[RMDB]
RNA sequence: GGGAACGACUCGAGUAGAGUCGAAAAGGAAGACAACUCCGGGUCUUCCAAGACGCACGAGUGCAGCGUCAAGUACUCGAAGGAAGGCGAAAGACACCACGUCUUCCAACCGGAGAAGGUGUCAGAAGGGAUGCAGGUACUUCGGUACUUGCAUCCCAAAAGAAACAACAACAACAAC
Reactivity to 2A3 in 0.01 (KOAc 150mM, MgCl2 10mM, bicine 150mM(pH8.5), 24C), signal-to-noise 4, nucleotides 027 to 126: g010g000a010a000g000a000c000a050a040c040u010c000c010g020g000g000u000c000u020u000c000c000a000a000g020a000c000g030c000a040c070g120a060g110u180g050c130a010g010c020g060u020c020a000a000g030u020a070c010u010c040g040a060a060g020g000a000a010g000g000c010g020a090a020a020g030a010c010a000c010c010a010c010g000u000c010u000u000c000c000a000a000c000c000g000g000a000g000a020a030g000g000u010g000u010c020a010g090a120a120
Reactivity to DMS in 0.01 (KOAc 150mM, MgCl2 10mM, bicine 150mM(pH8.5), 24C), signal-to-noise 1, nucleotides 027 to 126: g010g000a020a000g030a000c020a040a110c000u000c000c000g020g040g000u000c000u050u000c000c050a110a010g000a100c040g000c000a140c050g030a110g000u000g000c140a040g000c000g000u000c000a100a130g000u020a060c000u000c010g060a090a100g000g000a050a030g000g030c030g010a060a080a060g000a070c140a040c000c060a260c010g000u000c000u040u000c000c010a030a000c000c000g000g000a010g070a190a000g000g010u000g040u030c000a130g000a110a180
The record gives the reactivity of an RNA of 177 nucleotides to 2A3 and DMS. For DMS, 2,330 sequencing reads were counted. 2A3 adducts were read by reverse transcription with SuperScript II with manganese. The 2A3 profile rests on 8,707 reads. DMS adducts were read by reverse transcription with MarathonRT. Conditions: 150 mM KOAc, 10 mM MgCl2 and 150 mM bicine (pH 8.5), 24 C.